[RMDB]
RNA sequence: GGGAACGACUCGAGUAGAGUCGAAAAGAAAGUGCUUCAGCUAAGAUAUGUAGCGCUGAUUUCGAACGGCUCGAUUGCAUAUAUCAAUCGCAUGCUUCGCUACAUAUUCAAUGAUGAUGAGCCGUGGCGGACUGACUCUUUUCGAAGAGUCAGUCCGAAAAGAAACAACAACAACAAC
Reactivity to 2A3 in 0.01 (KOAc 150mM, MgCl2 10mM, bicine 150mM(pH8.5), 24C), signal-to-noise 2, nucleotides 027 to 126: g070a020a080a000g090u050g040c020u020u040c000a010g050c020u070a090a040g000a050u040a000u040g010u020a000g010c010g020c050u040g210a160u060u110u220c130g000a060a030c040g000g000c000u010c030g020a030u020u020g000c020a010u140a020u090a030u300c000a010a000u010c030g070c070a030u160g010c000u110u110c000g000c000u020a000c030a010u010a010u040u050c060a030a110u130g050a010u030g010a010u010g030a020g000c000c040g020u030g050g130
Reactivity to DMS in 0.01 (KOAc 150mM, MgCl2 10mM, bicine 150mM(pH8.5), 24C), signal-to-noise 2, nucleotides 027 to 126: g020a130a180a070g010u000g040c030u000u000c020a050g060c020u000a130a160g000a010u000a040u000g000u020a000g000c010g000c300u000g000a110u000u000u000c140g000a080a120c080g000g000c020u000c060g010a010u000u000g010c290a160u010a070u010a110u000c050a030a000u000c030g030c210a040u030g000c080u000u000c030g020c000u020a010c000a000u000a020u000u000c120a060a100u020g010a050u000g000a050u030g020a040g000c010c010g060u000g000g000
The record gives the reactivity of an RNA of 177 nucleotides to 2A3 and DMS. The reactions ran in a buffer of 150 mM KOAc, 10 mM MgCl2 and 150 mM bicine (pH 8.5), at 24 C. 2A3 adducts were read by reverse transcription with SuperScript II with manganese.